[RMDB]
RNA sequence: GGGAACGACUCGAGUAGAGUCGAAAAGAUAUGGACUAUGAUUUGCCAAUCUAAGACAGUCGGAAACGAUCGAGAUUGGACCCAAACAAUGUAGUCCUAAGUCAAAACCUUAACUUCGGUUAAGGAAGAUUAGACCCUUGUUCGCAAGGGUCUAAUCAAAAGAAACAACAACAACAAC
Reactivity to 2A3 in 0.01 (KOAc 150mM, MgCl2 10mM, bicine 150mM(pH8.5), 24C), signal-to-noise 1, nucleotides 027 to 126: g000a000u060a020u120g010g000a000c000u010a030u150g110a250u180u020u090g010c020c030a000a000u000c000u060a150a000g160a150c090a030g150u030c020g000g000a050a070a020c010g030a030u090c070g040a000g000a060u000u010g030g000a110c140c000c020a020a010a000c100a040a070u120g020u000a000g010u010c000c000u030a140a010g000u010c010a000a020a060a260c010c000u000u000a020a000c010u030u040c280g160g000u020u000a010a000g010g010a020a020
Reactivity to DMS in 0.01 (KOAc 150mM, MgCl2 10mM, bicine 150mM(pH8.5), 24C), signal-to-noise 1, nucleotides 027 to 126: g000a040u000a290u070g000g000a020c010u000a000u000g000a060u010u010u030g010c000c040a040a030u010c000u000a220a050g000a090c300a120g000u000c000g030g000a080a070a100c010g000a000u000c060g000a000g000a020u000u000g030g010a290c170c150c140a050a020a130c060a030a030u000g000u000a000g030u010c010c000u010a020a100g010u000c080a040a030a080a180c000c000u000u000a000a010c000u000u000c250g100g000u000u000a010a000g000g030a020a080
Structure probing data (2A3 and DMS) for a 177-nucleotide construct. The DMS profile rests on 651 reads.